Source information:
An RNA of 177 nucleotides, treated with DMS and 2A3 and read out base by base. The 2A3 profile rests on 9,668 reads. 2A3 adducts were read by reverse transcription with SuperScript II with manganese. DMS adducts were read by reverse transcription with MarathonRT. DMS (dimethyl sulfate) methylates the pairing face of unpaired adenines and cytosines. The reactions ran in a buffer of 150 mM KOAc, 10 mM MgCl2 and 150 mM bicine (pH 8.5), at 24 C.
RNA sequence: GGGAACGACUCGAGUAGAGUCGAAAAUUGUGCCUAUUGCCAUACUAGUCUUUGCCGCCUGCGAAGCAGCGGUGGGCCUAGCCCUACUAGUCUCAAUCUCCAACACAUAUGGCCUAGACUACGUACAAUUAACCCCUCAAUUCGUUGAGGGGUUAAUAAAAGAAACAACAACAACAAC
Reactivity to DMS in 0.01 (KOAc 150mM, MgCl2 10mM, bicine 150mM(pH8.5), 24C), signal-to-noise 5, nucleotides 027 to 126: u020u010g010u010g040c070c050u030a060u020u010g000c050c040a070u020a090c030u010a020g000u000c030u010u000u040g040c020c020g000c100c080u010g010c020g000a110a130g010c020a030g010c040g000g010u010g000g000g010c030c040u000a090g000c040c020c010u000a050c040u000a040g020u000c020u000c080a080a070u010c040u000c030c020a060a090c130a060c160a090u020a060u010g010g020c010c050u000a070g010a070c010u020a030c130g000u010a050c170a080
Reactivity to 2A3 in 0.01 (KOAc 150mM, MgCl2 10mM, bicine 150mM(pH8.5), 24C), signal-to-noise 9, nucleotides 027 to 126: u050u050g030u060g030c020c020u110a140u050u170g030c010c010a040u040a070c040u020a020g020u000c020u050u090u220g020c000c010g080c030c030u050g030c080g180a250a060g000c030a010g010c000g020g000u030g020g000g000c010c010u040a050g000c000c000c000u040a050c010u020a020g050u000c010u000c030a070a110u030c030u010c050c030a160a070c050a030c020a100u110a090u220g020g010c000c010u030a030g030a030c010u050a040c110g070u030a020c040a020